Chemical mapping of a 177-nucleotide RNA with DMS and 2A3. It was measured as part of the RMDB library OK1LIB. DMS adducts were read by reverse transcription with MarathonRT. Values are in units of 0.01, from 0 to 300, in steps of 10. The DMS profile rests on 875 reads.

RNA sequence: GGGAACGACUCGAGUAGAGUCGAAAAUGCAGCUUCUGCCUUAAAGGACGAGGAGCGCAAAGAAUACCUUCGAAAGCUGGAGCUGCUUCACUUCAACGUGGGUGCCGUUGAGGCAUCAGAAGGUCGCGCUAUCGCGGUACUUCGGUACCGCGAUAGCAAAAGAAACAACAACAACAAC
Reactivity to DMS in 0.01 (KOAc 150mM, MgCl2 10mM, bicine 150mM(pH8.5), 24C), signal-to-noise 1, nucleotides 027 to 126: u000g040c000a080g000c020u000u000c020u000g000c000c070u000u000a050a240a050g000g060a200c190g010a040g000g000a070g000c060g110c080a080a070a150g000a170a210u060a070c100c000u000u000c000g000a150a190a150g000c080u000g000g000a020g000c030u000g170c220u000u060c170a040c040u000u000c100a140a020c020g000u000g000g060g070u070g000c070c000g040u000u010g040a300g000g000c000a000u000c040a000g000a060a000g010g000u000c060g000c180
Reactivity to 2A3 in 0.01 (KOAc 150mM, MgCl2 10mM, bicine 150mM(pH8.5), 24C), signal-to-noise 2, nucleotides 027 to 126: u060g000c020a000g000c000u020u040c010u000g080c010c000u100u030a200a070a130g100g000a080c230g160a030g060g020a100g090c030g000c050a040a130a000g180a050a160u180a070c000c000u010u020c040g030a060a040a040g000c020u070g110g000a000g130c020u010g100c000u030u050c000a000c000u190u210c030a150a180c060g090u070g050g040g040u070g050c020c000g010u000u250g100a030g060g000c040a000u000c000a030g000a070a000g040g000u080c040g000c010